[RMDB]
RNA sequence: GGGAACGACUCGAGUAGAGUCGAAAAAGUUUCUUGAUCUUCUUGUUGAUUCGCCGGAGCUCCUUCUCGGCUAUUCGCUUUUUCUUCCUUUCCUCUACCCACUGCUCGAGGGCCUCCUCCCUCGCCUACCGCUAAGCCUUCGGGCUUAGCAAAAGAAACAACAACAACAAC
Reactivity to 2A3 in 0.01 (KOAc 150mM, MgCl2 10mM, bicine 150mM(pH8.5), 24C), signal-to-noise 6, nucleotides 027 to 129: a000g040u030u020u010c010u050u060g070a100u010c010u060u010c030u090u100g020u050u060g040a100u050u050c070g020c020c000g050g010a050g030c020u010c010c010u090u040c070u030c010g030g010c030u040a100u040u070c030g050c020u040u040u050u040u010c010u030u030c020c000u010u050u030c010c000u030c010u040a110c010c020c010a030c050u080g030c030u020c030g040a020g000g020g020c010c020u020c020c000u000c000c010c000u000c010g000c000c010u090a100c030c050
Reactivity to DMS in 0.01 (KOAc 150mM, MgCl2 10mM, bicine 150mM(pH8.5), 24C), signal-to-noise 5, nucleotides 027 to 129: a030g040u040u030u000c020u050u020g010a120u050c050u030u010c000u010u040g050u020u040g010a080u000u000c140g000c090c000g040g020a090g030c130u060c030c050u020u020c040u020c060g000g000c100u020a070u040u040c040g020c000u020u030u030u010u020c040u010u030c110c020u000u000u000c030c000u040c040u030a120c000c000c000a100c040u010g020c040u000c070g030a070g020g030g080c090c000u000c080c030u000c000c000c000u000c040g030c040c070u040a010c190c060